[RMDB]
RNA sequence: GGGAACGACUCGAGUAGAGUCGAAAAGUGGGACGGCCAGGCGCGACGGGAGGGAAGCAACCGGUUGCAGUCCGGCCUCCUGUACCUGGCUGGCCCGGGCUGGGGCUGCAAGCUUUCCAGCCAAACUACGUAACAGCUGUUUCGACAGCUGUUACGUAAAAGAAACAACAACAACAAC
Reactivity to DMS in 0.01 (KOAc 150mM, MgCl2 10mM, bicine 150mM(pH8.5), 24C), signal-to-noise 1, nucleotides 027 to 126: g000u020g060g020g000a050c000g010g000c030c000a000g000g020c300g020c090g030a010c000g000g000g020a140g000g000g000a060a150g000c300a060a300c020c060g000g000u020u010g010c280a170g000u020c000c000g000g000c000c000u000c000c000u000g000u000a020c040c020u020g020g000c000u000g010g000c030c000c000g010g010g010c020u050g000g000g000g000c000u000g000c270a140a180g000c020u010u000u000c000c000a020g000c050c000a000a090a040c050u020
Reactivity to 2A3 in 0.01 (KOAc 150mM, MgCl2 10mM, bicine 150mM(pH8.5), 24C), signal-to-noise 3, nucleotides 027 to 126: g140u200g000g010g000a000c000g010g000c000c000a020g020g000c080g020c050g300a020c010g020g000g000a010g000g020g010a140a000g040c050a130a120c000c010g020g060u040u300g110c100a020g070u040c000c000g000g030c000c000u000c000c010u000g000u010a000c000c000u000g000g000c000u000g000g010c000c020c000g000g000g000c000u000g000g000g000g000c030u100g080c140a210a080g010c000u100u080u040c000c000a010g000c000c010a000a000a010c010u000